[RMDB]
RNA sequence: GGGAACGACUCGAGUAGAGUCGAAAAAUGGCGAAUGCAUGGGGAACUACCUCUGUGUCGCGAGUUCGAUUCUCGCCAGGGCCUGGUCCUGUAGCUCAGUUGGUAGAGCAAGCUGUUCCCCGGACACAAAAUCCAGCUAGGUUCGCCUAGCUGGAAACGAGGUAUACAUCUUCGGAUGUAUACCUCGAAAAGAAACAACAACAACAAC
Reactivity to DMS in 0.01 (KOAc 150mM, MgCl2 10mM, bicine 150mM(pH8.5), 24C), signal-to-noise 2, nucleotides 027 to 156: a070u020g030g010c020g040a090a030u000g000c060a120u040g000g010g030g020a110a170c060u000a040c060c030u000c020u010g020u000g060u020c060g000c010g000a010g020u000u000c070g000a300u000u010c000u000c000g030c030c050a100g000g020g010c050c070u010g080g020u000c000c000u010g010u000a090g000c020u000c020a060g020u000u020g050g020u000a080g000a170g030c000a100a090g020c010u000g030u000u000c000c000c000c110g030g000a130c090a070c050a070a030a100a190u000c000c000a020g000c000u000a000g000g000u000u040c300g010c020c000u000a020g010c000u010g000g010a000a000a060
Reactivity to 2A3 in 0.01 (KOAc 150mM, MgCl2 10mM, bicine 150mM(pH8.5), 24C), signal-to-noise 2, nucleotides 027 to 156: a000u100g070g000c080g100a110a010u190g010c060a070u040g010g010g010g020a040a060c020u060a030c040c000u050c050u030g030u010g010u060c060g000c010g000a000g010u080u110c070g030a050u050u030c000u000c000g000c010c010a010g010g010g010c040c230u180g170g030u050c010c000u010g060u080a020g020c000u000c020a020g030u150u080g170g030u110a050g000a020g040c030a040a000g030c020u060g010u040u010c000c010c000c000g010g030a030c020a000c000a060a130a000a010u000c000c000a010g000c000u000a010g000g000u010u010c080g040c050c000u000a000g010c000u000g000g000a000a010a000
Source: RMDB library M2RFPK, as collected in RNAgym. Chemical mapping of a 207-nucleotide RNA with DMS and 2A3. For DMS, 2,726 sequencing reads were counted. 2A3 adducts were read by reverse transcription with SuperScript II with manganese. Conditions: 150 mM KOAc, 10 mM MgCl2 and 150 mM bicine (pH 8.5), 24 C.